[RMDB]
RNA sequence: GGGAACGACUCGAGUAGAGUCGAAAAUACACUUUACGUGUGCUGGUUUCAUUACUUUGUCCCAAACCAGGCACGCGUAAUUAAAGGCCAGUUAGGCCAGGUCCGCGUUAUCGAUGGUCACCAAUAAUCAAGUACGCAUGUUCGCAUGCGUACUUGAAAAAGAAACAACAACAACAAC
Reactivity to 2A3 in 0.01 (KOAc 150mM, MgCl2 10mM, bicine 150mM(pH8.5), 24C), signal-to-noise 2, nucleotides 027 to 126: u050a020c080a030c060u040u000u010a010c010g000u010g010u000g020c000u000g030g000u060u000u100c100a110u060u200a150c100u250u120u250g080u080c000c000c000a020a000a020c010c030a050g090g100c010a010c000g000c000g010u040a000a000u020u060a050a020a050g020g000c010c000a090g160u220u150a020g010g040c000c000a000g010g020u000c010c010g070c040g020u070u110a160u100c020g090a130u070g040g000u130c080a000c170c030a050a070u140a110a080
Reactivity to DMS in 0.01 (KOAc 150mM, MgCl2 10mM, bicine 150mM(pH8.5), 24C), signal-to-noise 2, nucleotides 027 to 126: u020a100c120a210c110u000u000u000a000c010g050u000g010u000g030c000u000g020g000u000u000u010c140a070u020u020a090c120u000u000u010g020u000c020c010c000a030a040a010c000c000a010g010g010c040a000c000g010c020g000u000a010a010u000u000a100a150a080g000g000c020c000a160g020u010u000a120g010g010c010c000a030g030g000u000c030c070g000c110g000u000u000a090u000c030g000a050u000g010g010u000c060a130c010c030a110a060u030a110a140

About this RNA
An RNA of 177 nucleotides, treated with 2A3 and DMS and read out base by base. It was measured as part of the RMDB library M2PK90. Reactivities are rounded to 0.1 and cut off at 0 and 3. For 2A3, 973 sequencing reads were counted. Conditions: 150 mM KOAc, 10 mM MgCl2 and 150 mM bicine (pH 8.5), 24 C. Reactivities are given for positions 27 through 126.